An RNA of 207 nucleotides, treated with 2A3 and read out base by base. The RNA was probed in 150 mM KOAc, 10 mM MgCl2 and 150 mM bicine (pH 8.5) at 24 C. Reactivities are given for positions 27 through 156.
[RMDB]
RNA sequence: GGGAACGACUCGAGUAGAGUCGAAAACAAGGUGGUGGUUCUGGAAUCUGCUGCUUACACAAUCUAGUUAAUUUCUAAACAGACCAAAAAUCAAAGAACCUACAGAAUUAUAGGCCUAACUCCCAAGCCUCUCUAUAAGUAUCUCUGAGAUGGAUCCGACACAAGAUGAGUUCGCUCAUCUUGUGUCAAAAGAAACAACAACAACAAC
Reactivity to 2A3 in 0.01 (KOAc 150mM, MgCl2 10mM, bicine 150mM(pH8.5), 24C), signal-to-noise 2, nucleotides 027 to 156: c050a030a030g010g020u040g030g050u050g020g040u070u040c020u020g040g050a050a140u000c040u040g000c000u000g000c020u100u180a030c020a020c000a050a260u030c050u040a040g050u120u080a050a150u190u210u000c050u150a130a060a020c000a050g110a040c000c000a130a050a050a020a000u070c040a080a000a150g010a100a010c050c000u050a030c020a050g070a020a000u240u120a090u060a190g000g040c010c000u000a030a040c020u020c000c000c000a040a000g000c000c020u030c010u030c000u060a140u100a160a110g030u090a190u160c070u010c040u090g050a010g000a100u170g040g000a080u100c110c090